[RMDB]
RNA sequence: GGGAACGACUCGAGUAGAGUCGAAAAUCCUAAGUCGGACCUGAAACUACGAAGAACUAUAAUCGAGGUUGUCGGAAACGACAACCUAAGACAGUUAUAGGGAGUAGGAGUACGGGUCCGAUAUGGAAAAACAAGCGUGAGGUUCGCCUCACGCUUGGUGAACCCUGAAGUUCGCUUCAGGGUUCACAAAAGAAACAACAACAACAAC
Reactivity to 2A3 in 0.01 (KOAc 150mM, MgCl2 10mM, bicine 150mM(pH8.5), 24C), signal-to-noise 1, nucleotides 027 to 156: u020c000c000u060a150a020g030u010c000g000g000a000c000c020u060g010a010a030a060c010u020a010c010g230a300a090g030a100a010c010u010a000u030a040a030u140c020g010a020g000g000u000u000g000u000c000g000g060a050a050a050c000g000a000c000a000a000c010c000u000a000a000g010a000c060a020g010u040u000a010u000a010g000g020g000a060g010u000a000g000g010a010g030u030a040c090g000g010g010u010c010c000g000a000u000a010u000g000g020a130a120a000a010a010c000a020a000g040c010g020u020g000a010g000g050u080u150c280g050c120c000u000c000a000c000g010c020u010u000g000